[RMDB]
RNA sequence: GGGAACGACUCGAGUAGAGUCGAAAAAUAAAGCGUAAUCGCAUCCCAGUAGCAAAGAGCAGCGUAAAGGCGAAAGCCGAACUCAAGAACGCAUCGGGCUAAGAUGCGAUCGUAGCCACGCAAAAAAUCAUGCUACUAGUUUCGACUAGUAGCAUGAAAAAGAAACAACAACAACAAC
Reactivity to 2A3 in 0.01 (KOAc 150mM, MgCl2 10mM, bicine 150mM(pH8.5), 24C), signal-to-noise 2, nucleotides 027 to 126: a000u150a010a070a030g000c010g040u060a050a030u090c010g000c000a010u010c020c020c010a040g180u080a010g000c050a090a190a060g060a060g030c180a010g010c050g060u070a080a050a000g000g010c010g060a030a030a000g010c000c000g010a030a010c080u070c100a110a030g020a080a010c010g000c000a010u030c030g050g050g000c020u040a040a000g020a010u000g010c010g010a020u040c000g020u030a000g040c010c020a040c030g000c000a040a050a000a000a000a090
Reactivity to DMS in 0.01 (KOAc 150mM, MgCl2 10mM, bicine 150mM(pH8.5), 24C), signal-to-noise 3, nucleotides 027 to 126: a110u000a070a120a110g000c010g000u010a180a120u020c000g000c010a090u010c010c080c050a150g010u000a080g000c010a010a080a110g020a050g000c100a140g030c010g010u000a040a070a170g000g010c010g000a090a050a120g010c000c000g000a100a070c110u010c100a090a050g000a080a070c030g010c000a050u000c030g010g030g000c090u010a060a150g000a020u000g000c000g000a020u010c070g000u000a110g000c040c060a060c040g050c060a020a020a070a080a050a060